Structure probing data (2A3) for a 177-nucleotide construct. The RNA was probed in 150 mM KOAc, 10 mM MgCl2 and 150 mM bicine (pH 8.5) at 24 C. For 2A3, 1,209 sequencing reads were counted. The data come from the RNA Mapping Database (RMDB), library OK1LIB.

RNA sequence: GGGAACGACUCGAGUAGAGUCGAAAAGGGACACUAUAUGAGAUUCGUGGGGUUUAGUGUUGGGUAGGGUGAUAUUUAAAUCAUAUAUCGAUAUUCAAUAUUUAAAUAUCUUUCUCAUUCUCAAUAGCUAUUAUUUUAACUUCGGUUAAAAUAAUAGAAAAGAAACAACAACAACAAC
Reactivity to 2A3 in 0.01 (KOAc 150mM, MgCl2 10mM, bicine 150mM(pH8.5), 24C), signal-to-noise 2, nucleotides 027 to 126: g010g000g030a000c020a050c060u040a010u030a110u300g050a000g000a020u070u180c110g000u120g000g010g000g010u000u020u190a040g000u030g000u040u090g030g030g070u080a010g000g000g000u050g010a000u010a000u000u010u000a010a010a000u040c000a000u130a000u010a040u120c020g010a000u010a050u140u090c000a090a000u040a000u190u020u000a010a010a000u040a020u020c020u010u080u000c020u000c000a030u150u010c010u000c010a050a050u070a150g040